Structure probing data (2A3 and DMS) for a 207-nucleotide construct.
The data come from the RNA Mapping Database (RMDB), library ARCHII.
The reactions ran in a buffer of 150 mM KOAc, 10 mM MgCl2 and 150 mM bicine (pH 8.5), at 24 C.
Values are in units of 0.01, from 0 to 300, in steps of 10.
The DMS profile rests on 5,165 reads.

[RMDB]
RNA sequence: GGGAACGACUCGAGUAGAGUCGAAAAUGGGGGAGCUCAGGACCACCAGGUUGUCUAAGAAGAGGUGAACCGACCCAGGUCGGAGACGGAGCAGGUCAAAUCCCCUGUGCUGAUCAGUAGUGGGAUCGCACCUGUGAAUAGACACUGCAGUUCAGCCCUACCUUAAAAACUUCGGUUUUUAAGGUAGAAAAGAAACAACAACAACAAC
Reactivity to 2A3 in 0.01 (KOAc 150mM, MgCl2 10mM, bicine 150mM(pH8.5), 24C), signal-to-noise 3, nucleotides 027 to 156: u100g000g000g000g000g000a020g010c030u030c050a020g080g080a050c000c000a020c000c010a030g070g000u060u080g010u080c030u030a050a070g020a080a040g040a100g080g050u070g030a100a050c020c000g000a020c000c030c020a070g030g030u020c060g030g010a040g020a040c030g020g010a030g020c020a040g060g000u060c030a070a060a160u030c000c020c000c000u010g050u070g000c030u040g010a070u070c040a020g060u080a010g010u100g030g010g050a050u050c040g020c050a070c020c030u180g010u020g100a050a070u060a040g020a010c000a000c040u030g010c010a030g000u000u020c000a010g010c000c000
Reactivity to DMS in 0.01 (KOAc 150mM, MgCl2 10mM, bicine 150mM(pH8.5), 24C), signal-to-noise 3, nucleotides 027 to 156: u000g020g000g010g000g000a120g050c040u000c070a140g020g010a090c030c050a070c040c030a090g030g050u000u000g000u000c010u020a090a140g030a170a120g020a100g010g020u000g000a090a170c020c000g010a090c030c020c120a090g040g000u000c030g000g010a110g010a110c060g020g020a170g000c030a070g010g010u000c050a050a060a140u010c030c010c000c000u000g010u000g020c040u000g030a060u000c020a090g040u000a040g040u010g000g000g020a150u000c020g030c030a090c050c040u010g020u000g010a150a120u010a130g000a100c000a040c020u000g010c030a130g030u000u000c010a070g010c040c090